RNA sequence: GGGAACGACUCGAGUAGAGUCGAAAAACAGUCAGUACGCUGACUGAGGGAAACGGGAGCCGGGCUUGGGACAAGAGCCAUCCCAAGUCCAAGGCCAAGUAGGCUCUAGUGAUGGUACGGCAUCACAAAAACUGGUCUACCUUCGGGUAGACCAGAACGAGAGUACUUGGUUCGCCAAGUACUCUCGAAAAGAAACAACAACAACAAC
Reactivity to 2A3 in 0.01 (KOAc 150mM, MgCl2 10mM, bicine 150mM(pH8.5), 24C), signal-to-noise 2, nucleotides 027 to 156: a000c020a000g000u000c000a000g040u070a030c210g020c110u010g000a000c000u000g010a060g020g060g010a120a180a140c090g040g000g060a070g000c080c060g010g000g010c000u000u000g000g000g000a000c020a070a090g000a000g030c000c000a010u020c000c000c000a000a000g010u000c000c000a060a020g030g000c000c030a070a030g080u150a120g080g000c000u000c000u010a050g010u000g000a020u010g040g080u120a060c090g050g020c010a000u010c010a010c020a020a070a000a000a000c000u000g000g000u000c000u000a010c010c000u030u050c210g090g000g010u000a000g000a000c000c000a000g000a000a000
Structure probing data (2A3) for a 207-nucleotide construct.
The reactions ran in a buffer of 150 mM KOAc, 10 mM MgCl2 and 150 mM bicine (pH 8.5), at 24 C.
Source: RMDB library M2RFPK, as collected in RNAgym.
The 2A3 profile rests on 1,887 reads.